RNA sequence: GGGAACGACUCGAGUAGAGUCGAAAAAGGAAGACACUGGCCAUGUUCGUGCAGCGGCAGUAUGUCGUGACAUGACAUACCUUGGAGAGAAGUUAACAGAUGAGGAAGUUGAUAAAAAUCAUCAGAGGAGUUGAACCGGAUUCGUCCGGUUCAACUCAAAAGAAACAACAACAACAAC
Reactivity to DMS in 0.01 (KOAc 150mM, MgCl2 10mM, bicine 150mM(pH8.5), 24C), signal-to-noise 2, nucleotides 027 to 126: a100g010g020a070a100g040a020c080a070c030u000g000g020c040c080a110u000g010u000u000c130g020u000g000c080a090g020c110g000g020c070a110g000u000a070u000g000u000c010g020u010g000a110c150a090u010g000a010c010a020u000a040c060c100u010u000g060g000a060g000a030g040a070a090g010u010u010a050a040c110a040g000a070u000g040a080g000g010a070a070g010u000u000g010a110u040a010a060a010a080a180u000c050a040u000c060a110g000a110g000